[RMDB]
RNA sequence: GGGAACGACUCGAGUAGAGUCGAAAAUCGAGUAGAGUCGAAAACCCGUUAAGCUACGGACGAUGCAAACGUAGCAGGCAUCGAAUUUUCGGCCCUUCGGUUAGUUAACUAACAGGGAACGACUCGAAUGUCCUCAACACUUCGGUGUUGAGGACAUAAAAGAAACAACAACAACAAC
Reactivity to 2A3 in 0.01 (KOAc 150mM, MgCl2 10mM, bicine 150mM(pH8.5), 24C), signal-to-noise 1, nucleotides 027 to 126: u040c000g000a000g060u070a070g030a010g030u000c010g000a050a010a030a040c040c020c000g010u050u110a130a050g000c020u020a020c010g030g120a020c060g050a040u120g180c090a050a120a040c010g010u060a010g070c000a000g000g080c020a060u000c070g070a120a080u070u040u070u010c060g050g070c000c000c020u070u050c020g030g010u050u010a100g010u060u120a220a160c000u000a000a020c020a000g000g020g020a100a060c010g070a040c000u000c010g040a010
Reactivity to DMS in 0.01 (KOAc 150mM, MgCl2 10mM, bicine 150mM(pH8.5), 24C), signal-to-noise 2, nucleotides 027 to 126: u010c010g000a020g000u000a190g000a060g040u000c000g000a040a060a070a130c170c020c000g030u000u010a030a120g020c040u000a010c040g010g030a190c130g010a090u030g020c160a080a090a120c030g000u000a000g010c040a090g000g020c150a040u000c140g040a040a130u000u000u000u000c000g000g020c030c010c040u000u040c180g010g010u000u000a040g000u000u040a060a080c050u000a010a040c120a040g000g000g030a070a300c110g000a030c160u010c020g000a070

The data come from the RNA Mapping Database (RMDB), library OK2TST. The record gives the reactivity of an RNA of 177 nucleotides to 2A3 and DMS. Values cover nucleotides 27 to 126. The reactions ran in a buffer of 150 mM KOAc, 10 mM MgCl2 and 150 mM bicine (pH 8.5), at 24 C. For 2A3, 812 sequencing reads were counted.